The record gives the reactivity of an RNA of 177 nucleotides to 2A3 and DMS.

RNA sequence: GGGAACGACUCGAGUAGAGUCGAAAAGAUAUGGACGAAGCGAUAAGCUUACAUUCGGAAACGAAUGAAGCUUUUGACGCUUUGGUCCUAAGUCAAAGUUAAUAUAGCCUUCGGGCUAUAUUAACAACGUUAAAGUCCAGUUCGCUGGACUUUAACGAAAAGAAACAACAACAACAAC
Reactivity to 2A3 in 0.01 (KOAc 150mM, MgCl2 10mM, bicine 150mM(pH8.5), 24C), signal-to-noise 2, nucleotides 027 to 126: g040a020u030a000u050g000g010a000c020g010a020a000g030c000g080a110u070a300a050g000c030u020u030a190c000a000u010u000c010g000g000a000a030a050c000g000a020a000u000g000a010a010g000c000u090u140u090u230g080a030c000g010c010u010u000u030g230g050u040c000c000u020a060a020g020u010c030a220a100a000g000u000u000a010a000u000a010u010a010g010c010c000u020u080c300g030g010g000c000u000a000u000a010u020u000a000a000c000a000a000
Reactivity to DMS in 0.01 (KOAc 150mM, MgCl2 10mM, bicine 150mM(pH8.5), 24C), signal-to-noise 3, nucleotides 027 to 126: g000a030u010a230u000g010g010a010c000g000a000a000g020c000g020a150u000a080a060g020c010u010u000a160c000a000u000u000c010g010g000a090a060a120c000g010a020a010u000g000a040a000g000c010u000u000u010u000g010a190c070g010c000u000u000u000g010g020u000c000c000u010a020a100g010u000c020a090a110a170g010u000u000a010a000u000a010u000a000g020c000c000u000u020c210g040g010g020c000u000a000u000a000u000u000a000a010c020a060a110
Description
For DMS, 2,925 sequencing reads were counted. The 2A3 profile rests on 3,807 reads. The reactions ran in a buffer of 150 mM KOAc, 10 mM MgCl2 and 150 mM bicine (pH 8.5), at 24 C. High DMS reactivity at an A or C suggests that its Watson-Crick edge is free.